The data come from the RNA Mapping Database (RMDB), library M2PK90. The record gives the reactivity of an RNA of 177 nucleotides to DMS and 2A3. The DMS profile rests on 1,080 reads. Values cover nucleotides 27 to 126.
RNA sequence: GGGAACGACUCGAGUAGAGUCGAAAAAAGUUGCACCAGGUACGGAUACCAGACGUUGCCAAACAGGGUGACAUGAGGAUCACCCAUGUACUGUCCCUUCGCAGCCGUACCUGGUGCUGGUGAAAAAGUACUGAUCGGGAUUCGUCCCGAUCAGUACAAAAGAAACAACAACAACAAC
Reactivity to DMS in 0.01 (KOAc 150mM, MgCl2 10mM, bicine 150mM(pH8.5), 24C), signal-to-noise 1, nucleotides 027 to 126: a050a090g010u000u000g010c000a000c000c000a000g020g020u000a000c000g000g000a100u000a070c130c270a120g000a030c030g010u000u000g000c040c100a040a080a060c100a060g000g010g000u000g000a000c000a080u010g010a070g030g010a130u000c020a000c000c000c000a010u030g000u000a080c090u000g000u000c020c060c030u000u000c070g030c050a050g000c000c000g010u020a010c000c000u000g000g010u000g000c000u000g000g000u050g000a070a060a110a090a110
Reactivity to 2A3 in 0.01 (KOAc 150mM, MgCl2 10mM, bicine 150mM(pH8.5), 24C), signal-to-noise 1, nucleotides 027 to 126: a000a020g200u100u040g000c000a010c010c000a000g000g000u020a000c030g000g000a050u050a210c000c080a010g080a040c030g090u060u050g050c030c010a120a070a030c010a040g030g000g000u040g010a010c040a070u240g220a150g080g020a110u020c010a040c020c030c000a020u050g040u040a040c070u040g020u010c000c000c000u050u080c040g010c000a020g000c000c010g000u000a000c000c000u000g010g000u000g010c000u000g000g000u130g000a150a030a030a000a000